[RMDB]
Structure probing data (2A3 and DMS) for a 177-nucleotide construct. As a SHAPE reagent, 2A3 marks flexible, mostly unpaired nucleotides at the ribose 2'-OH. The 2A3 profile rests on 8,977 reads. Values cover nucleotides 27 to 126. It was measured as part of the RMDB library OK2TST. DMS adducts were read by reverse transcription with MarathonRT. For DMS, 6,176 sequencing reads were counted. In probing experiments dimethyl sulfate is read out at A N1 and C N3, which are open when not base-paired.
RNA sequence: GGGAACGACUCGAGUAGAGUCGAAAAUCAGGGAACGCUAUGUUGUUAGUCCUUCAAGAUAGACGUUCUUCUUCCAUAGACCAUGUCGUUGCCACAGAAAUGAUGUUUAAAUGGCUACAUCACAUCGCGAGCUCUAAUAAUUCGUUAUUAGAGCUCGAAAAGAAACAACAACAACAAC
Reactivity to 2A3 in 0.01 (KOAc 150mM, MgCl2 10mM, bicine 150mM(pH8.5), 24C), signal-to-noise 5, nucleotides 027 to 126: u100c020a010g010g010g000a020a000c000g000c000u000a010u010g240u060u020g040u050u070a080g100u140c050c030u050u020c000a000a000g020a070u000a000g100a150c000g020u000u000c000u100u000c010u060u000c020c010a050u050a030g060a030c030c000a080u070g000u020c010g020u010u030g080c010c000a030c010a030g150a020a130a050u120g010a010u030g050u010u090u120a100a160a070u150g070g000c030u060a020c000a030u040c030a010c010a040u090c050g000
Reactivity to DMS in 0.01 (KOAc 150mM, MgCl2 10mM, bicine 150mM(pH8.5), 24C), signal-to-noise 6, nucleotides 027 to 126: u020c170a140g010g010g000a010a020c010g010c010u010a020u000g000u000u000g010u000u000a070g010u010c130c100u000u010c010a010a020g000a020u000a010g010a150c010g020u000u000c000u010u000c060u000u000c040c040a100u010a130g020a130c060c040a100u010g010u000c040g010u000u010g010c020c030a100c290a090g000a070a070a120u000g000a020u000g010u000u000u000a050a120a110u010g010g000c070u000a040c030a040u010c110a050c120a090u010c090g020